[RMDB]
RNA sequence: GGGAACGACUCGAGUAGAGUCGAAAAUCGACUUCCUUCGGGAAGUCGAAAAUAACGGUGGGCUCAUGAAGCUAGUCGAACAUGCUGCUCGACCUAGACUAAAAAGAAUCUCGUUCGCGAGAUUCAACAGAUGUUGAUUCUUCGGAAUCAACAUCUGAAAAGAAACAACAACAACAAC
Reactivity to DMS in 0.01 (KOAc 150mM, MgCl2 10mM, bicine 150mM(pH8.5), 24C), signal-to-noise 3, nucleotides 027 to 126: u010c000g000a030c000u010u000c000c010u000u020c180g030g010g010a030a010g020u000c000g000a030a010a060a070u000a100a120c210g000g010u010g000g010g010c010u030c050a010u000g000a080a300g000c020u000a040g020u020c070g010a060a090c020a040u000g020c240u010g010c020u000c010g010a020c020c020u000a090g020a160c050u020a010a070a080a120a140g000a000a000u000c000u000c010g040u010u000c220g030c010g000a010g000a020u000u000c000a100a150
Reactivity to 2A3 in 0.01 (KOAc 150mM, MgCl2 10mM, bicine 150mM(pH8.5), 24C), signal-to-noise 2, nucleotides 027 to 126: u010c000g000a000c000u000u000c010c000u010u050c140g090g000g000a000a020g020u000c000g000a000a000a000a010u060a050a020c020g020g010u040g010g000g000c000u020c010a030u010g040a050a020g010c060u100a060g210u210c030g000a080a050c010a010u030g070c050u020g010c010u020c030g020a020c000c000u030a020g050a050c040u140a100a030a000a040a120g010a010a010u040c000u000c010g050u070u030c250g020c000g070a000g000a010u000u000c010a020a000